[RMDB]
RNA sequence: GGGAACGACUCGAGUAGAGUCGAAAACUCAGGAGGCUGAGGUAGGAGAAUUGCUUGAACCCAAGGAGGCAAAGGUUGCAGUGAGCUGAGAUCGCACCAUUGCACUCCAGCUUGAGCAACAGAGCGAGAAAAGAGUGGUUUUCGAACCACUCUUUUCAAAAGAAACAACAACAACAAC
Reactivity to 2A3 in 0.01 (KOAc 150mM, MgCl2 10mM, bicine 150mM(pH8.5), 24C), signal-to-noise 2, nucleotides 027 to 126: c000u000c000a010g030g060a060g150g040c040u030g030a010g020g050u050a060g070g070a070g030a060a110u070u060g000c020u060u070g030a050a070c040c050c020a020a020g090g020a040g000g080c020a040a060a050g140g020u080u120g000c060a100g070u010g180a030g000c060u010g090a080g000a190u160c070g000c020a020c020c040a080u030u170g000c040a070c070u000c000c010a010g000c000u020u020g040a020g040c000a040a000c020a070g060a030g020c060g070a080
Reactivity to DMS in 0.01 (KOAc 150mM, MgCl2 10mM, bicine 150mM(pH8.5), 24C), signal-to-noise 4, nucleotides 027 to 126: c030u000c020a080g010g010a080g020g020c030u000g000a030g010g000u000a050g000g010a080g000a090a090u000u000g000c010u000u000g000a080a080c030c050c050a120a150g020g000a050g010g010c010a040a060a080g010g000u000u000g000c020a050g010u010g010a060g000c030u000g000a100g010a080u010c140g000c040a060c130c110a140u020u000g010c010a060c020u000c030c010a030g010c040u000u010g010a150g010c020a030a030c060a100g010a120g010c090g010a170